[RMDB]
RNA sequence: GGGAACGACUCGAGUAGAGUCGAAAAUUUAUAGAGAGUGUUUCUAUUGUGUAUCAUGUGCCUCCUCCCCCAUGAAGGGGAUACUCUUCCUUCACUUCAAGCCCAACAAAAUGGCUCCACUAGGGCCCUAAAAACUUACUUUCGAGUAAGUUUUUAGAAAAGAAACAACAACAACAAC
Reactivity to DMS in 0.01 (KOAc 150mM, MgCl2 10mM, bicine 150mM(pH8.5), 24C), signal-to-noise 2, nucleotides 027 to 126: u030u030u010a100u010a140g010a170g000a150g030u000g010u000u000u010c020u000a080u000u000g020u020g010u000a100u000c030a060u000g030u000g000c030c030u010c000c040u000c020c020c000c020c040a140u000g000a050a050g000g020g010g020a150u010a030c190u000c080u000u010c020c010u000u000c050a070c100u010u000c110a070a130g000c000c000c050a070a120c140a010a100a140a080u000g000g010c010u010c010c140a090c120u010a130g010g020g010c040c040
Chemical mapping of a 177-nucleotide RNA with DMS.